An RNA of 207 nucleotides, treated with DMS and 2A3 and read out base by base. The RNA was probed in 150 mM KOAc, 10 mM MgCl2 and 150 mM bicine (pH 8.5) at 24 C.

[RMDB]
RNA sequence: GGGAACGACUCGAGUAGAGUCGAAAAUAUUAAGUGGCCAUUCAUUCUGCUCAUAUAGAUGUAUCUUUUCUGAAGAUGAAUUUUGGAUUGGACGCAAUGGCUCAUGCCUGUAAAAUCCUAGCACUUUGGUAGGCCAAGAAGGGCAGAUUGCUUGAGCCUAUGGGAGAACUUUCGAGUUCUCCCAUAGAAAAGAAACAACAACAACAAC
Reactivity to DMS in 0.01 (KOAc 150mM, MgCl2 10mM, bicine 150mM(pH8.5), 24C), signal-to-noise 2, nucleotides 027 to 156: u020a090u010u020a060a070g010u000g030g040c020c020a140u000u010c050a060u030u000c000u000g030c020u010c010a130u030a180u000a070g000a150u000g020u000a040u000c020u000u000u020u020c070u000g040a040a050g010a160u000g010a090a160u010u000u020u000g020g030a060u000u000g010g000a100c030g020c020a070a120u000g010g000c000u000c050a100u000g010c020c000u000g020u000a030a050a050a060u050c050c000u000a110g050c060a070c050u010u010u000g050g020u000a080g000g000c080c010a030a100g000a070a100g000g000g000c030a040g000a070u000u000g030c030u000u000g010a220g000c060
Reactivity to 2A3 in 0.01 (KOAc 150mM, MgCl2 10mM, bicine 150mM(pH8.5), 24C), signal-to-noise 2, nucleotides 027 to 156: u090a030u110u110a140a020g030u060g010g000c000c000a000u020u000c010a010u010u000c000u050g020c000u000c030a050u110a010u060a150g110a110u090g050u050a130u110c060u090u150u090u050c060u080g080a070a060g040a170u130g060a070a160u080u090u150u080g030g000a020u030u040g030g000a000c020g000c030a020a160u030g000g000c000u020c130a020u130g040c010c030u010g030u070a030a080a030a080u110c010c000u010a010g070c020a000c000u080u010u000g020g030u040a010g040g000c000c020a020a020g060a030a050g060g000g000c000a000g020a040u000u000g030c000u030u000g020a030g020c020